[RMDB]
RNA sequence: GGGAACGACUCGAGUAGAGUCGAAAAGGGCAACUCUUCUCAGAAUCCAGCGAGAGGCGUAGGAGAGAGGGCCGCGGUGCUCUGGAGUAGAGGCUUCUUGCUUCGAAACACCAUCGAUCGUCCCUUCGACGCAUAAGAGGUUCGCCUCUUAUGCGUCAAAAGAAACAACAACAACAAC
Reactivity to DMS in 0.01 (KOAc 150mM, MgCl2 10mM, bicine 150mM(pH8.5), 24C), signal-to-noise 1, nucleotides 027 to 126: g010g030g020c020a110a090c010u000c030u000u000c000u040c080a190g000a180a140u010c050c050a090g010c210g000a090g000a030g000g010c260g000u010a010g000g030a100g020a100g000a030g030g010g000c080c000g010c020g000g000u000g000c020u000c000u000g030g000a070g010u000a090g000a010g010g000c010u000u010c270u000u000g000c000u000u000c010g000a150a110a120c010a000c180c000a030u000c010g010a070u020c070g020u000c000c000c000u030u010c060
Reactivity to 2A3 in 0.01 (KOAc 150mM, MgCl2 10mM, bicine 150mM(pH8.5), 24C), signal-to-noise 1, nucleotides 027 to 126: g030g020g000c020a040a060c060u040c000u100u000c010u000c000a070g300a090a080u040c020c020a070g130c060g150a260g010a030g200g020c050g090u120a040g000g020a040g000a000g000a020g020g040g010c010c040g000c020g030g000u010g000c020u040c000u000g000g010a000g010u020a010g000a010g000g000c000u080u010c110u200u300g010c000u000u020c010g000a000a000a000c010a010c000c050a000u010c010g000a140u040c030g060u030c000c000c000u020u110c060